[RMDB]
RNA sequence: GGGAACGACUCGAGUAGAGUCGAAAAGUACUCUUAGGUUCGCCUAAGAGUACAAAAAAACCUUUGUGUUGACAUGGAAUGUACAGCCCAUUGGGCUGUUACAUUUCCAACAGCAACACUCUGGUAAAAAAGGUAGGACUAUUCGUAGUCCUACCAAUCCUUGGAUAUACUUCGGUAUAUCCAAGGAAAAAGAAACAACAACAACAAC
Reactivity to 2A3 in 0.01 (KOAc 150mM, MgCl2 10mM, bicine 150mM(pH8.5), 24C), signal-to-noise 2, nucleotides 027 to 156: g000u000a000c000u000c000u000u000a000g000g030u050u080c250g110c030c000u000a000a000g000a000g000u010a000c000a000a000a040a000a000a000a000c020c000u030u000u010g000u000g020u000u020g040a100c040a130u040g010g010a000a000u000g010u010a020c000a000g000c000c020c050a220u090u300g000g000g030c000u000g000u000u020a010c000a000u140u050u000c000c000a010a010c010a010g060c000a000a000c000a000c000u000c000u010g000g010u110a120a010a020a080a020a030g030g010u040a000g000g000a000c010u010a020u070u130c280g080u050a000g000u000c000c000u010a000c000c000a000a010
Reactivity to DMS in 0.01 (KOAc 150mM, MgCl2 10mM, bicine 150mM(pH8.5), 24C), signal-to-noise 2, nucleotides 027 to 156: g000u000a010c000u040c000u000u000a020g030g030u010u000c300g070c010c000u000a010a000g020a010g000u000a000c000a000a010a050a060a030a050a030c000c000u000u000u000g010u000g000u000u000g010a030c080a300u000g010g000a050a010u000g020u000a030c010a040g000c000c000c010a300u000u010g090g010g020c000u000g000u000u000a010c010a000u010u000u010c000c020a040a100c090a210g010c000a010a000c010a010c000u010c000u000g000g030u010a010a040a080a100a050a050g010g020u000a010g020g000a020c010u000a090u000u020c300g030u000a040g010u000c000c000u000a010c000c000a010a000